Chemical mapping of a 177-nucleotide RNA with 2A3. The RNA was probed in 150 mM KOAc, 10 mM MgCl2 and 150 mM bicine (pH 8.5) at 24 C. The 2A3 profile rests on 907 reads. The data come from the RNA Mapping Database (RMDB), library OK1LIB.
[RMDB]
RNA sequence: GGGAACGACUCGAGUAGAGUCGAAAAGACUGCGUGCACUAGAGACGAUAUCGAGCCGGAAAUUAAUCGAUAAUGUCUCGAGUAGUGGAUACGAUCCGGCAAGUAUCGACUACUUGUGCUCGUAGGAACGUCGUCAGCUGUUCGCAGCUGACGACGUAAAAGAAACAACAACAACAAC
Reactivity to 2A3 in 0.01 (KOAc 150mM, MgCl2 10mM, bicine 150mM(pH8.5), 24C), signal-to-noise 1, nucleotides 027 to 126: g030a010c040u000g000c000g000u020g050c000a000c010u000a000g000a010g000a050c020g040a030u000a000u010c000g000a000g000c000c000g000g100a060a070a180u290u300a030a120u070c010g000a000u000a090a060u070g030u000c000u000c000g000a000g000u040a000g030u000g000g000a000u020a050c000g000a030u050c030c000g050g000c000a000a060g000u000a010u000c000g070a000c000u040a000c000u010u070g010u000g000c000u000c000g010u010a000g000g000a010